Structure probing data (DMS and 2A3) for a 177-nucleotide construct. The DMS profile rests on 2,237 reads. For 2A3 the reverse transcriptase was SuperScript II with manganese.
RNA sequence: GGGAACGACUCGAGUAGAGUCGAAAAGGGCAGUCACAUGGUGGCCUUCCCGUCGCUGUGGUCGGUGAUCGACGAGUCCACCGGGCGAAUUAUCUGCGAAUUGGACAACCCCAUGCUCGACCCCGGCAGCGCCAUGAUUAUUCGUAAUCAUGGCGCUAAAAGAAACAACAACAACAAC
Reactivity to DMS in 0.01 (KOAc 150mM, MgCl2 10mM, bicine 150mM(pH8.5), 24C), signal-to-noise 2, nucleotides 027 to 126: g000g020g000c060a090g000u090c010a120c040a200u090g000g000u020g000g000c070c060u000u130c040c000c000g020u000c060g020c050u040g050u000g050g020u000c020g050g000u030g000a020u070c180g020a080c130g020a210g000u000c110c000a060c020c000g040g000g020c040g010a080a080u020u080a060u040c040u000g020c050g000a220a050u010u000g020g030a050c180a100a170c150c030c050c000a200u010g000c050u000c030g000a100c040c080c000c000g020g000c080
Reactivity to 2A3 in 0.01 (KOAc 150mM, MgCl2 10mM, bicine 150mM(pH8.5), 24C), signal-to-noise 2, nucleotides 027 to 126: g040g010g020c090a040g060u080c040a010c040a110u140g050g070u180g050g060c010c000u030u030c010c000c000g040u030c020g000c010u040g010u070g020g130u020c010g010g060u060g040a130u080c050g060a070c040g040a050g030u000c040c020a040c040c000g010g010g000c030g030a080a100u210u090a100u220c040u090g020c020g020a100a070u090u090g030g010a040c010a080a110c020c000c000c010a050u090g030c010u040c060g040a050c000c020c010c000g020g000c000